[RMDB]
RNA sequence: GGGAACGACUCGAGUAGAGUCGAAAAGCGUACACCUUCGGGUGUACGCAAAGGUGGUUGUCGCUCCACCAAAAACAAACCGAUAAAAAGUACGAAAGUACAAAAUCCUUUGGUUCGCCAAAGGAAACGAUACUUAAACGUUCGCGUUUAAGUAUCGAAAAGAAACAACAACAACAAC
Reactivity to 2A3 in 0.01 (KOAc 150mM, MgCl2 10mM, bicine 150mM(pH8.5), 24C), signal-to-noise 3, nucleotides 027 to 126: g000c000g010u000a000c010a000c010c000u030u100c200g110g000g000u010g000u000a000c000g000c000a000a010a000g000g000u010g000g030u040u110g070u050c020g010c050u040c010c010a010c010c020a090a020a000a000a010c030a010a010a000c040c000g000a000u090a050a190a010a000a010g010u000a000c010g050a140a020a020g000u000a000c000a010a090a000a050u030c010c000u010u000u010g050g030u040u050c230g060c030c000a000a000a000g000g000a020a000a000
Reactivity to DMS in 0.01 (KOAc 150mM, MgCl2 10mM, bicine 150mM(pH8.5), 24C), signal-to-noise 3, nucleotides 027 to 126: g010c000g010u000a000c000a010c010c000u010u010c210g010g020g000u000g000u000a000c000g010c010a000a010a110g000g020u000g000g000u000u010g020u000c030g050c130u000c000c010a010c000c010a040a020a010a030a040c120a020a010a110c300c020g010a020u000a030a060a110a100a060g000u000a000c000g000a120a070a100g030u000a000c000a090a070a080a100u000c000c000u000u000u000g000g000u000u000c220g010c010c000a000a000a010g010g000a010a020a070
Source information:
Structure probing data (2A3 and DMS) for a 177-nucleotide construct. Source: RMDB library M2PK50, as collected in RNAgym. The RNA was probed in 150 mM KOAc, 10 mM MgCl2 and 150 mM bicine (pH 8.5) at 24 C. For DMS the reverse transcriptase was MarathonRT. The 2A3 profile rests on 7,142 reads. 2A3 adducts were read by reverse transcription with SuperScript II with manganese.